[RMDB]
About this RNA
Chemical mapping of a 207-nucleotide RNA with 2A3. Source: RMDB library OK3TST, as collected in RNAgym. 2A3 adducts were read by reverse transcription with SuperScript II with manganese.
RNA sequence: GGGAACGACUCGAGUAGAGUCGAAAAUACAAAGGAACAGAGUGGGAAUCAAUAUUCCCAAGGGAACUGCUCAUACGUGGUAGUUACAUAUCAAACAUUGACAUUUCUCAGUGUGUUGGGACAUCAAAGUCAAUGAUAUGUAAAUCAGACACUAGUAGCAGCGUCUAAAAUUCGUUUUAGACGCUGCAAAAGAAACAACAACAACAAC
Reactivity to 2A3 in 0.01 (KOAc 150mM, MgCl2 10mM, bicine 150mM(pH8.5), 24C), signal-to-noise 1, nucleotides 027 to 156: u130a000c090a000a180a040g130g010a050a010c110a040g010a030g190u110g000g000g000a080a020u090c040a180a000u070a080u260u010c000c000c000a010a040g040g000g000a070a080c000u000g010c010u040c080a090u120a210c120g000u000g040g000u170a000g060u010u000a000c000a000u000a000u000c010a000a300a080c020a030u040u000g040a000c020a090u020u090u090c000u000c030a040g010u010g040u090g090u300u090g010g000g000a000c000a060u020c090a010a120a000g010u000c000a000a050u020g000a000u070a000u020g040u000a030a030a030u070c000a010g090a120c010a000c080u030a050g070u060a000
The reactions ran in a buffer of 150 mM KOAc, 10 mM MgCl2 and 150 mM bicine (pH 8.5), at 24 C.